[RMDB]
RNA sequence: GGGAACGACUCGAGUAGAGUCGAAAACGCGCUAGGUUUGGUCGCCUAGGGGAUGGAGAUAUGGAAAGGGUCUCGUGUGCUGUCAGUCGGUCGAAAGACGCGCUUGCAACAUGGGCCUAUAACCGGACCCCAUAAACAAGUUCGCUUGUUUAUGGGGAAAAGAAACAACAACAACAAC
Reactivity to 2A3 in 0.01 (KOAc 150mM, MgCl2 10mM, bicine 150mM(pH8.5), 24C), signal-to-noise 3, nucleotides 027 to 126: c020g030c010g030c050u030a010g040g000u060u040u090g100g020u030c020g010c010c000u020a040g050g020g010g010a040u100g050g060a090g050a100u150a120u190g090g080a070a150a150g110g010g010u030c060u040c100g010u020g000u010g040c030u010g010u030c010a020g060u030c020g040g010u000c010g030a090a020a000g020a020c050g010c000g000c300u030u030g010c030a090a000c000a090u010g000g000g000c000c000u080a100u030a060a030c000c000g030g020a050
Reactivity to DMS in 0.01 (KOAc 150mM, MgCl2 10mM, bicine 150mM(pH8.5), 24C), signal-to-noise 2, nucleotides 027 to 126: c050g020c020g030c020u000a030g010g020u000u010u000g000g000u000c160g000c020c010u010a030g010g000g000g000a090u000g010g010a140g000a130u000a150u010g010g000a070a140a210g000g000g010u000c020u010c050g030u000g020u010g010c030u000g000u000c300a020g020u010c010g020g020u000c010g000a090a100a220g000a010c010g030c010g010c000u010u000g010c030a050a010c020a020u000g000g010g040c010c010u000a050u000a110a140c040c020g000g000a300